[RMDB]
RNA sequence: GGGAACGACUCGAGUAGAGUCGAAAAUUGCGGAUUGGACACGCGCAGCUGGCGCAGUCGCAUCACGCCCAGUAGCACCGAUUGCUCGGCGUGUGCCCAGCCGGGUGAACCGCUUUCGGUGGAAUUCACGUACGAGGGCAUUCGUGCCCUCGUACGUAAAAGAAACAACAACAACAAC
Reactivity to 2A3 in 0.01 (KOAc 150mM, MgCl2 10mM, bicine 150mM(pH8.5), 24C), signal-to-noise 2, nucleotides 027 to 126: u280u070g000c140g000g040a080u100u090g090g060a010c000a050c100g100c000g000c050a050g170c110u260g050g020c020g040c140a040g050u090c060g000c140a000u090c050a010c050g000c040c000c000a010g020u060a010g030c020a030c110c020g020a090u000u140g000c040u030c010g010g040c050g010u120g020u090g020c000c000c000a030g060c020c050g020g050g000u180g040a060a110c000c020g040c000u040u050u000c050g000g000u050g000g070a070a070u190u120c120
Reactivity to DMS in 0.01 (KOAc 150mM, MgCl2 10mM, bicine 150mM(pH8.5), 24C), signal-to-noise 1, nucleotides 027 to 126: u090u010g000c000g000g010a100u080u000g000g010a130c040a140c050g000c030g000c120a100g000c270u010g010g050c080g060c040a060g000u000c070g000c100a070u000c080a050c000g000c000c000c080a060g000u010a100g000c060a070c070c020g000a000u000u000g000c010u000c250g000g000c060g100u000g000u000g030c000c000c010a250g000c020c010g060g000g000u000g000a100a190c000c110g000c020u000u000u000c000g000g050u000g060g000a070a060u100u000c080